[RMDB]
RNA sequence: GGGAACGACUCGAGUAGAGUCGAAAAGGAGGAAGACAUGGGAUUGACACGAUCCAUCAACGUCCUAGUGGUCGGAGCAGCCUUCGUAUUCGUCGUGACGAUGCUUUUCAUCUGACGAAGAACGAUCGUAAAGAAUUAAGUUCGCUUAAUUCUUUACAAAAGAAACAACAACAACAAC
Reactivity to DMS in 0.01 (KOAc 150mM, MgCl2 10mM, bicine 150mM(pH8.5), 24C), signal-to-noise 9, nucleotides 027 to 126: g010g010a080g010g000a130a090g010a050c150a080u010g010g000g000a050u010u000g010a120c130a090c130g010a050u000c040c060a090u000c060a070a140c100g000u000c020c020u000a090g010u010g010g020u010c040g000g000a120g010c070a080g010c030c060u000u000c010g000u000a150u000u000c010g010u000c000g010u000g000a040c100g010a020u000g010c300u010u000u000u000c010a050u010c010u010g010a010c000g000a010a010g000a100a040c030g010a040u010c160
Reactivity to 2A3 in 0.01 (KOAc 150mM, MgCl2 10mM, bicine 150mM(pH8.5), 24C), signal-to-noise 9, nucleotides 027 to 126: g040g010a020g030g020a060a030g030a040c040a080u130g060g010g020a040u030u100g060a060c040a010c200g050a040u000c020c010a030u050c020a030a070c030g090u000c000c010u050a070g210u030g100g010u030c040g020g000a030g020c030a010g010c010c010u030u020c010g000u010a050u000u010c010g010u000c050g050u050g030a030c070g010a020u060g080c120u230u110u090u100c010a010u000c020u050g000a000c010g000a010a010g010a060a020c010g010a020u100c060